[RMDB]
RNA sequence: GGGAACGACUCGAGUAGAGUCGAAAACGCUGGGAAAGCGGAUGUGACUGGAGCUCUGUGUUACAGCUACUGAAGCGCGCACGGUAGAAGGUGGCAGAGCGAUGAAAGUCACGGAUGCUUUCCUGUGCUGAAGCGCGCACGGCAACCGAAAGGUGCGGAUGCUUUGUCUCUUCGGAGACAAAGCAUCAAAAGAAACAACAACAACAAC
Reactivity to 2A3 in 0.01 (KOAc 150mM, MgCl2 10mM, bicine 150mM(pH8.5), 24C), signal-to-noise 1, nucleotides 027 to 156: c020g000c000u000g020g000g010a000a000a030g040c030g010g010a020u070g000u010g000a000c000u000g010g080a000g040c000u000c030u030g040u000g080u140u140a130c090a160g100c000u000a000c030u020g040a090a000g000c000g040c020g000c000a020c050g000g000u000a000g010a190a040g130g050u080g010g040c010a020g160a000g010c000g210a040u230g000a030a040a000g020u000c000a000c010g000g000a000u030g000c000u000u020u000c000c000u020g000u020g000c020u050g030a160a010g000c010g000c000g000c000a000c030g060g010c010a000a160c000c000g040a100a000a000g010g000u040g020c030g040